RNA sequence: GGGAACGACUCGAGUAGAGUCGAAAAGUGGCACAGUUCGCUGUGCCACAAAGGACUACCCGUCAGGGUUAAGGCCAUACGGACAGCCGGGUCCACUCCCGAAAAUCCGUAGCUUCGGCUACGGAAACUUUUAUCGUGAGUUCGCUCACGAUAAAAGAAAAGAAACAACAACAACAAC
Reactivity to 2A3 in 0.01 (KOAc 150mM, MgCl2 10mM, bicine 150mM(pH8.5), 24C), signal-to-noise 2, nucleotides 027 to 126: g010u000g000g030c010a010c000a010g010u040u080c160g040c130u000g000u020g000c000c000a000c000a000a000a000g000g010a010c000u070a060c020c040c020g080u170c140a120g040g000g030u070u150a070a050g050g000c020c000a040u120a110c100g080g050a030c030a040g050c010c000g040g000g000u010c000c000a020c060u000c010c000c020g030a040a070a010a050u000c000c000g000u000a000g000c000u010u030c280g070g000c000u010a000c000g010g000a020a000a000
Reactivity to DMS in 0.01 (KOAc 150mM, MgCl2 10mM, bicine 150mM(pH8.5), 24C), signal-to-noise 2, nucleotides 027 to 126: g000u000g000g010c000a000c000a020g010u010u030c300g020c010u010g010u000g010c010c000a000c000a020a090a110g000g000a020c020u010a090c010c010c000g000u010c300a070g000g000g020u000u020a070a120g000g000c000c050a190u000a130c130g000g020a100c140a180g000c010c010g000g000g030u000c000c020a160c100u010c000c000c000g020a100a050a150a120u000c000c000g020u010a000g000c000u000u010c220g010g000c000u000a000c000g010g000a000a010a010
Notes:
Chemical mapping of a 177-nucleotide RNA with 2A3 and DMS. DMS adducts were read by reverse transcription with MarathonRT. 2A3 adducts were read by reverse transcription with SuperScript II with manganese. Reactivities are given for positions 27 through 126.